[RMDB]
Chemical mapping of a 177-nucleotide RNA with 2A3 and DMS.
For 2A3 the reverse transcriptase was SuperScript II with manganese.
For 2A3, 832 sequencing reads were counted.
Values are in units of 0.01, from 0 to 300, in steps of 10.
RNA sequence: GGGAACGACUCGAGUAGAGUCGAAAAGUGCAGAGUGAAAUUCAUAGGUGCGGCGCCAAUGUGGCGUAACGACCCGGUAGUCCGCGCAGUCGCGCUGUAAACGUUCUGUGUUGGCGUUCGGGCCUCAGGAGGAGGCAUUAUUCGUAAUGCCUCCUCCAAAAGAAACAACAACAACAAC
Reactivity to 2A3 in 0.01 (KOAc 150mM, MgCl2 10mM, bicine 150mM(pH8.5), 24C), signal-to-noise 2, nucleotides 027 to 126: g080u080g010c160a010g030a080g230u160g170a110a060a050u160u110c060a020u080a110g060g000u110g120c020g010g000c020g000c000c000a010a090u130g070u140g030g000c040g000u030a100a000c030g050a060c000c000c000g020g000u080a010g040u000c010c020g010c030g000c020a000g150u190c150g000c010g010c060u020g170u290a040a030a040c020g060u240u060c000u000g030u000g030u010u000g020g010c000g010u000u160c010g040g000g000c010c010u130c040a000
Reactivity to DMS in 0.01 (KOAc 150mM, MgCl2 10mM, bicine 150mM(pH8.5), 24C), signal-to-noise 2, nucleotides 027 to 126: g000u020g000c140a090g000a070g050u000g010a080a070a070u040u000c090a080u020a050g000g050u030g020c000g000g000c000g000c010c000a040a050u010g050u020g010g020c060g000u000a050a050c140g000a140c020c050c000g000g000u030a070g010u010c040c060g000c060g010c050a040g010u010c140g010c030g000c060u020g000u030a040a060a210c030g000u000u040c010u000g010u000g000u010u000g000g020c030g000u000u050c020g010g000g030c140c000u010c140a180

The data come from the RNA Mapping Database (RMDB), library OK1LIB.